The record gives the reactivity of an RNA of 177 nucleotides to DMS and 2A3.
For DMS the reverse transcriptase was MarathonRT.
The data come from the RNA Mapping Database (RMDB), library OK1LIB.
RNA sequence: GGGAACGACUCGAGUAGAGUCGAAAAGAAUCUCACUUGGGCGGGUGCUUUAGUGACUCCAGCGCGUAUUAGUGAGAUUAUGAAUACGUUGUGGGGAUUUAUGAAAUGAUUACGCGCAAAGUAAGAAGGGUAUACUAAUGUUCGCAUUAGUAUACCCAAAAGAAACAACAACAACAAC
Reactivity to DMS in 0.01 (KOAc 150mM, MgCl2 10mM, bicine 150mM(pH8.5), 24C), signal-to-noise 3, nucleotides 027 to 126: g010a070a040u000c010u010c000a020c030u010u020g030g000g000c050g020g000g020u010g020c070u000u020u030a150g030u040g010a110c040u000c010c040a170g030c010g000c010g020u020a050u010u010a070g000u000g000a050g000a030u010u000a030u050g000a090a040u040a040c080g020u010u000g020u000g000g000g000g000a070u010u020u010a080u010g000a060a060a080u020g010a080u020u010a030c000g010c010g010c020a070a040a110g000u020a060a030g020a100a130
Reactivity to 2A3 in 0.01 (KOAc 150mM, MgCl2 10mM, bicine 150mM(pH8.5), 24C), signal-to-noise 2, nucleotides 027 to 126: g070a070a020u000c000u000c000a000c010u080u070g030g020g040c040g050g010g060u090g040c050u210u120u160a110g180u150g080a060c010u020c030c000a030g060c010g000c000g010u000a010u060u020a080g020u010g000a000g000a000u000u110a000u030g000a000a050u100a040c090g000u040u010g010u070g000g030g000g020a030u030u090u060a050u030g160a060a010a000u160g070a020u000u050a030c040g000c030g000c070a000a060a000g120u110a050a080g130a120a050